[RMDB]
RNA sequence: GGGAACGACUCGAGUAGAGUCGAAAAGGCUUCGAUUUCGUAUCUAUUUUUGCUUAAACCACUUUGCUGUUGUUCGGUGAAAGGUGUCGAGGACAACUGGGGUUACAAUUGGUGCCGCUUUUGAGUGCAUAAUUACGACCUUCGGGUCGUAAUUAUGAAAAGAAACAACAACAACAAC
Reactivity to DMS in 0.01 (KOAc 150mM, MgCl2 10mM, bicine 150mM(pH8.5), 24C), signal-to-noise 2, nucleotides 027 to 126: g010g010c020u000u000c070g000a060u010u010u020c060g020u000a100u000c020u000a060u000u010u010u000u010g000c050u000u010a060a110a130c030c010a080c130u000u010u000g020c040u000g000u000u000g000u000u010c060g000g000u000g010a040a050a090g000g000u010g030u000c090g010a090g010g000a050c070a040a060c060u010g010g000g010g010u010u010a050c110a050a100u010u010g010g010u000g030c060c030g020c100u000u000u000u000g010a120g010u010g010
Reactivity to 2A3 in 0.01 (KOAc 150mM, MgCl2 10mM, bicine 150mM(pH8.5), 24C), signal-to-noise 2, nucleotides 027 to 126: g010g000c020u040u000c010g050a050u080u110u070c090g060u090a060u020c040u050a230u070u110u000u100u080g070c000u040u010a120a060a050c020c000a060c050u140u080u120g050c040u020g020u080u020g070u070u060c050g040g090u040g060a060a050a060g110g000u050g040u040c020g050a070g060g020a000c010a030a000c030u040g060g010g090g000u050u060a040c030a110a060u060u080g030g000u040g020c030c030g100c010u100u080u050u070g060a030g020u070g000